[RMDB]
RNA sequence: GGGAACGACUCGAGUAGAGUCGAAAAUUGGUGACUGUCGGUGCUGGAAUCACUUCAUGCAUCCCAAGGUAUCCAUGGGGUUUUUUGUGCCUGAGCCAUCUUUGACGGCGAUGUACACGCAGUGCGGCAGGCACUAACGAUUCGUCGUUAGUGCCUGAAAAGAAACAACAACAACAAC
Reactivity to DMS in 0.01 (KOAc 150mM, MgCl2 10mM, bicine 150mM(pH8.5), 24C), signal-to-noise 4, nucleotides 027 to 126: u010u010g010g020u000g000a090c050u000g010u000c080g000g000u010g000c020u000g020g000a100a110u000c100a060c050u000u010c050a040u010g010c130a100u000c020c020c060a090a100g020g020u000a060u000c100c030a040u000g000g010g020g010u000u000u000u000u000u010g020u010g020c070c040u010g010a230g000c030c020a030u010c050u000u010u010g000a060c110g020g010c030g010a080u000g010u000a060c060a090c090g020c040a080g000u000g020c060g000g010
Reactivity to 2A3 in 0.01 (KOAc 150mM, MgCl2 10mM, bicine 150mM(pH8.5), 24C), signal-to-noise 1, nucleotides 027 to 126: u050u050g040g000u030g020a030c010u030g040u090c040g060g020u030g000c010u060g070g030a070a040u060c030a040c060u040u080c050a050u040g060c020a050u000c000c010c030a020a030g110g010u050a050u010c030c040a060u070g000g010g000g080u080u000u000u020u060u110g040u050g030c000c040u020g010a030g040c010c020a020u000c040u110u100u190g050a050c060g000g000c000g000a040u040g020u060a030c040a010c050g000c010a010g000u010g060c020g000g060

This 177-nucleotide RNA was probed chemically with DMS and 2A3. The RNA was probed in 150 mM KOAc, 10 mM MgCl2 and 150 mM bicine (pH 8.5) at 24 C. The DMS profile rests on 4,313 reads. In probing experiments dimethyl sulfate is read out at A N1 and C N3, which are open when not base-paired. The 2A3 profile rests on 1,704 reads. For 2A3 the reverse transcriptase was SuperScript II with manganese.